[RMDB]
RNA sequence: GGGAACGACUCGAGUAGAGUCGAAAACCAAUGCUCUCAUAUCCCGGAUCUCAAUGGCUAGGGCUGCAUUGGCCAAGGCUCAAGCUGAAAUGACCAGCAGGAUGCGUCCUGUGGUCAUUAUGAUGUGAAUCUCGGCAAAAUUCGUUUUGCCGAGAUUAAAAGAAACAACAACAACAAC
Reactivity to DMS in 0.01 (KOAc 150mM, MgCl2 10mM, bicine 150mM(pH8.5), 24C), signal-to-noise 2, nucleotides 027 to 126: c020c000a060a030u000g000c000u000c030u000c080a070u020a070u050c040c050c020g030g010a070u030c050u000c090a140a040u050g000g000c070u030a090g000g000g000c110u010g010c110a120u010u000g000g010c050c050a100a130g010g000c010u010c020a080a070g000c050u010g010a060a040a010u000g000a020c000c010a070g010c000a010g000g000a040u000g010c190g000u010c010c000u000g020u000g000g000u000c000a010u000u000a000u000g020a070u000g020u020g000
Reactivity to 2A3 in 0.01 (KOAc 150mM, MgCl2 10mM, bicine 150mM(pH8.5), 24C), signal-to-noise 3, nucleotides 027 to 126: c000c000a010a060u090g000c000u010c010u010c070a100u050a090u160c010c040c000g100g040a140u050c040u030c030a040a160u150g040g000c030u050a050g010g040g050c030u050g000c010a090u030u080g050g000c060c050a040a040g000g000c010u010c060a050a050g030c010u050g030a070a010a060u030g000a010c000c030a010g280c010a000g030g000a020u040g040c140g150u020c010c000u000g000u020g000g020u000c010a010u020u000a040u050g020a040u110g090u080g070